[RMDB]
Record summary:
This 177-nucleotide RNA was probed chemically with 2A3 and DMS.
RNA sequence: GGGAACGACUCGAGUAGAGUCGAAAAAAAAAGGCACUUCAGGUGGCUCUGGGGCGAAUGUACUGACGACAGACCAGAAGCGGGAAGCCGUUGAGUUUAUGUGUGAUGCGACCGGUCUGUCGAAAAAGAUUCUAAUACGUUUCGACGUAUUAGAAUCAAAAGAAACAACAACAACAAC
Reactivity to 2A3 in 0.01 (KOAc 150mM, MgCl2 10mM, bicine 150mM(pH8.5), 24C), signal-to-noise 3, nucleotides 027 to 126: a000a000a000a000a020g050g000c040a040c010u050u050c060a040g040g010u020g050g000c020u000c070u070g010g000g010g000c050g000a040a010u100g010u120a050c050u080g070a020c020g010a010c010a000g000a000c000c010a000g030a050a020g020c020g010g070g040a040a010g000c020c000g010u040u120g130a210g090u130u200u060a070u080g150u020g020u030g020a050u120g020c020g030a020c000c000g000g000u000c000u010g000u000c010g000a000a000a010a010a000
Reactivity to DMS in 0.01 (KOAc 150mM, MgCl2 10mM, bicine 150mM(pH8.5), 24C), signal-to-noise 4, nucleotides 027 to 126: a020a020a030a080a040g000g020c030a040c080u000u000c070a060g010g010u000g010g010c050u000c040u010g010g000g000g000c060g010a090a020u010g020u000a070c130u000g000a220c020g000a010c000a010g000a040c020c000a100g020a060a210g010c010g000g010g020a100a180g010c010c020g010u010u020g000a110g010u010u010u000a030u010g010u000g030u000g000a150u010g010c030g000a250c040c030g010g000u000c000u000g010u000c000g010a010a030a040a080a040

The RNA was probed in 150 mM KOAc, 10 mM MgCl2 and 150 mM bicine (pH 8.5) at 24 C. It was measured as part of the RMDB library M2PK90. Reactivities are given for positions 27 through 126. DMS adducts were read by reverse transcription with MarathonRT.